[RMDB]
RNA sequence: GGGAACGACUCGAGUAGAGUCGAAAAGAUGACAUCAGCAGGCAUCAGCCAAGUGAGAGUAACAGGUAUGAGGUUAGAUUUGUGCCAAACCCAAGACAUUUAUAAUCCGCAAGUGGCCUACAUGAAGUAUGUCUGUCUACACCUCUAGUAGCGCCUCUCACAGAGAUGCAUUCGUGCAUCUCUGUGAAAAAGAAACAACAACAACAAC
Reactivity to 2A3 in 0.01 (KOAc 150mM, MgCl2 10mM, bicine 150mM(pH8.5), 24C), signal-to-noise 1, nucleotides 027 to 156: g050a010u020g000a010c010a030u040c050a060g080c000a000g000g050c000a020u010c040a000g070c020c010a090a020g070u050g060a030g020a020g000u130a090a070c080a120g000g030u000a080u120g000a010g020g010u000u000a000g000a130u040u090u200g020u060g020c010c000a050a030a070c020c010c000a000a000g020a000c000a000u000u150u030a080u080a040a140u000c040c050g020c040a100a060g040u010g020g000c010c010u040a030c030a040u130g050a070a010g000u060a020u050g040u040c150u070g080u000c000u030a010c030a030c090c020u100c050u010a010g000u020a000g020c010g010c100c000u020c000
Notes:
Conditions: 150 mM KOAc, 10 mM MgCl2 and 150 mM bicine (pH 8.5), 24 C. Chemical mapping of a 207-nucleotide RNA with 2A3. Reactivities are given for positions 27 through 156.